[RMDB]
RNA sequence: GGGAACGACUCGAGUAGAGUCGAAAAUAAAAAUAAAUUUUCCGGCGGCGCAUGUUCGCGUCGUCGUAAGUCUGGAUUCCCAAGGCCCACUCGGUUCAACUUCGGUUUCCGGACAAAUACAAAGAACGUAUGUAUAAUAGUUCGCUAUUAUACAUACAAAAGAAACAACAACAACAAC
Reactivity to DMS in 0.01 (KOAc 150mM, MgCl2 10mM, bicine 150mM(pH8.5), 24C), signal-to-noise 2, nucleotides 027 to 126: u040a040a100a070a090a110u040a110a140a170u010u010u000u000c050c020g000g000c000g000g000c010g040c000a030u040g030u000u010c020g030c000g030u000c000g010u000c000g000u000a000a000g020u000c000u010g010g000a010u000u000c020c000c050a040a040g010g000c000c010c090a230c260u040c030g010g010u000u000c140a010a030c010u010u010c300g030g000u000u000u010c000c000g010g000a000c000a020a020a000u020a020c140a000a000a050g000a020a000c010
Reactivity to 2A3 in 0.01 (KOAc 150mM, MgCl2 10mM, bicine 150mM(pH8.5), 24C), signal-to-noise 7, nucleotides 027 to 126: u040a010a060a030a010a010u160a050a150a050u060u040u020u010c010c000g000g000c000g000g000c000g000c020a050u110g030u070u040c010g000c000g000u000c010g000u000c000g000u010a020a000g000u000c000u000g000g000a010u010u000c000c000c010a000a010g020g000c000c010c010a100c100u210c080g010g020u090u080c070a070a040c010u000u010c010g010g000u000u000u000c000c000g010g000a000c020a010a030a000u150a030c150a010a060a020g020a020a000c030